[RMDB]
RNA sequence: GGGAACGACUCGAGUAGAGUCGAAAAGAUAUGGACCCUAUGCAUGGUUCCAUAGGGAGACUAUCGGAUCGGAAACGAUCCGUAAGGUCGAAGAACUAUGGAAUCUGUGAUGUAGGGUCCUAAGUCACUCAACUAAGUGGUUCGCCACUUAGUUGAGAAAAGAAACAACAACAACAAC
Reactivity to 2A3 in 0.01 (KOAc 150mM, MgCl2 10mM, bicine 150mM(pH8.5), 24C), signal-to-noise 2, nucleotides 027 to 126: g030a000u030a090u120g000g010a000c000c020c000u010a010u040g040c020a020u050g040g060u000u000c000c000a000u000a010g020g000g040a060g000a010c030u060a040u300c010g000g010a000u010c020g030g030a070a040a090c020g010a000u000c000c000g010u050a220a200g060g000u000c000g050a150a040g040a040a010c000u000a020u000g010g010a010a010u030c020u010g030u000g060a300u090g040u010a020g030g000g000u000c000c000u000a000a000g000u000c000a010
Reactivity to DMS in 0.01 (KOAc 150mM, MgCl2 10mM, bicine 150mM(pH8.5), 24C), signal-to-noise 2, nucleotides 027 to 126: g010a070u000a300u000g010g010a000c000c000c000u000a000u000g000c010a030u000g040g020u010u000c000c000a040u000a010g000g010g040a100g020a020c010u000a300u000c020g000g000a010u010c000g000g010a190a120a270c010g000a010u000c010c000g020u000a060a240g000g000u000c000g000a070a170g010a170a220c020u010a000u000g000g000a010a010u000c010u000g050u000g000a110u000g000u000a010g000g000g010u000c000c000u000a000a100g000u000c030a300